[RMDB]
RNA sequence: GGGAACGACUCGAGUAGAGUCGAAAAUUAAUCCGGCUUUAAGUUGACGAGGGCUGGGUUUAUCGAGACAUCGGCGGGUGCCCUGCGGUCUUCCUGCGACCGUUAGAGGACUGGUAAACCAAUUUAACGCUAAUGAAUUAUUCGUAAUUCAUUAGCGAAAAGAAACAACAACAACAAC
Reactivity to DMS in 0.01 (KOAc 150mM, MgCl2 10mM, bicine 150mM(pH8.5), 24C), signal-to-noise 5, nucleotides 027 to 126: u000u000a050a050u010c010c010g010g010c020u000u000u000a040a110g010u010u020g010a090c160g010a060g010g000g020c010u000g020g010g010u000u000u000a020u000c050g010a230g000a070c070a050u000c030g010g000c030g020g000g010u000g020c020c030c030u000g010c030g000g000u000c020u000u000c080c070u000g020c170g010a020c030c030g010u010u010a040g010a080g010g010a080c050u000g010g010u000a050a070a120c040c050a060a120u010u000u000a060a140
Reactivity to 2A3 in 0.01 (KOAc 150mM, MgCl2 10mM, bicine 150mM(pH8.5), 24C), signal-to-noise 3, nucleotides 027 to 126: u030u020a000a020u000c020c000g030g000c030u100u070u150a120a050g060u190u210g150a090c080g050a060g040g020g000c000u010g000g000g030u000u020u000a070u030c040g020a020g020a030c020a100u060c010g040g020c030g000g050g030u040g040c010c000c000u000g000c000g000g010u000c010u100u030c040c030u060g020c030g050a050c010c020g010u020u050a050g030a110g030g050a020c060u070g080g000u130a090a070a060c000c030a030a050u120u100u120a120a030